[RMDB]
RNA sequence: GGGAACGACUCGAGUAGAGUCGAAAAAGUCAGUGGUCCGACUUACGAGUCGGAACACUGACAUGGCAGCUGGAUCCAGCCAGGCGGUGUAUCGCCAAACCCAGCCAAUCAAUCUACCCACCGGGAAUACAGAAAGCGAACUUCGGUUCGCUUUCAACUUUAGUCAAAGCUUCGGCUUUGACUAAAGAAAAGAAACAACAACAACAAC
Reactivity to 2A3 in 0.01 (KOAc 150mM, MgCl2 10mM, bicine 150mM(pH8.5), 24C), signal-to-noise 1, nucleotides 027 to 156: a010g000u000c000a000g000u000g020g000u030c000c000g000a000c020u030u020a080c280g100a000g000u000c000g000g010a000a000c000a000c010u000g000a000c010a000u000g000g000c040a030g010c000u010g000g000a080u110c100c050a030g000c020c000a010g000g000c000g040g000u190g080u170a170u280c000g000c000c000a000a010a030c000c000c010a000g020c010c020a010a090u100c010a010a050u010c050u140a050c000c000c080a120c110c100g040g000g040a070a030u190a100c060a020g010a000a020a000g000c000g010a000a000c000u100u060c160g080g030u010u010c000g000c010u000u000u000c000a000a000

Conditions: 150 mM KOAc, 10 mM MgCl2 and 150 mM bicine (pH 8.5), 24 C. This 207-nucleotide RNA was probed chemically with 2A3. For 2A3, 1,000 sequencing reads were counted. Reactivities are rounded to 0.1 and cut off at 0 and 3.